[RMDB]
RNA sequence: GGGAACGACUCGAGUAGAGUCGAAAAUACGGAUUGGAUUCGCGGCCAUCACAUCAAUUGUGCCUAUCAACUGGGUGCCGACGGGCAGGAUAUCAUGGUCUAUCCACCAGAACGCAGAGUGGAUGACGUACGGAAGUACAUUCGUGUACUUCCGUACAAAAGAAACAACAACAACAAC
Reactivity to 2A3 in 0.01 (KOAc 150mM, MgCl2 10mM, bicine 150mM(pH8.5), 24C), signal-to-noise 5, nucleotides 027 to 126: u140a030c050g050g030a040u060u110g070g010a040u040u100c050g000c030g100g000c010c020a030u050c050a010c020a050u160c080a050a150u150u090g060u050g050c000c020u120a130u120c030a070a100c060u030g020g030g030u060g040c020c030g050a080c020g000g000g040c030a010g020g070a040u050a020u150c060a090u140g060g010u020c040u090a040u000c000c000a000c000c010a030g080a200a050c120g020c180a030g080a030g090u030g000g020a010u020g020a010c050
Reactivity to DMS in 0.01 (KOAc 150mM, MgCl2 10mM, bicine 150mM(pH8.5), 24C), signal-to-noise 5, nucleotides 027 to 126: u000a130c140g000g000a070u000u000g000g010a250u000u010c070g020c070g020g000c020c040a060u000c060a060c070a050u000c130a060a100u010u000g030u010g020c060c030u000a080u000c080a060a080c120u010g010g010g010u000g000c040c040g000a080c130g010g000g000c040a040g000g000a050u010a060u000c080a060u010g010g010u000c020u010a030u000c020c000a040c010c030a160g000a060a130c190g000c130a090g000a110g020u000g000g010a030u010g010a040c120
Annotation
Chemical mapping of a 177-nucleotide RNA with 2A3 and DMS. Source: RMDB library OK2TRN, as collected in RNAgym. The RNA was probed in 150 mM KOAc, 10 mM MgCl2 and 150 mM bicine (pH 8.5) at 24 C. High 2A3 reactivity points to a flexible backbone, as in loops and unpaired stretches.